This 177-nucleotide RNA was probed chemically with 2A3 and DMS. For DMS the reverse transcriptase was MarathonRT. Source: RMDB library OK2TST, as collected in RNAgym. For 2A3 the reverse transcriptase was SuperScript II with manganese.

RNA sequence: GGGAACGACUCGAGUAGAGUCGAAAAGGCCAGCGCGUAGAUGUCGGCGCGGUAGGUUACCUCGUCGUUGGAGAACCGUUCGGGGGCCAUGUAUUUCCAGGUGCCCACCGCGGUGCCUAACUGGGUCCGUGUAGAUUGGAUUCGUCCAAUCUACACGAAAAGAAACAACAACAACAAC
Reactivity to 2A3 in 0.01 (KOAc 150mM, MgCl2 10mM, bicine 150mM(pH8.5), 24C), signal-to-noise 5, nucleotides 027 to 126: g040g010c010c010a030g010c020g000c030g040u070a030g040a260u150g090u190c050g040g000c010g000c020g010g040u060a090g030g130u120u120a070c010c010u000c010g050u010c000g020u070u050g070g030a150g030a120a050c030c000g020u130u110c090g040g010g000g020g000c000c000a020u070g070u050a200u010u150u080c050c010a030g030g040u120g010c010c000c030a220c060c030g010c070g000g010u020g020c000c000u020a060a030c060u090g050g000g060u020c060
Reactivity to DMS in 0.01 (KOAc 150mM, MgCl2 10mM, bicine 150mM(pH8.5), 24C), signal-to-noise 5, nucleotides 027 to 126: g000g010c010c010a060g020c030g010c090g010u010a080g020a190u010g010u000c040g010g020c020g010c080g010g010u000a050g010g000u000u000a070c030c000u000c060g010u000c090g020u010u000g000g010a150g000a090a040c070c010g010u000u010c070g010g000g000g000g010c020c030a080u010g010u000a120u000u010u010c100c050a070g020g010u010g000c010c000c010a110c060c060g010c030g000g020u000g010c040c020u000a040a080c070u000g010g000g020u000c080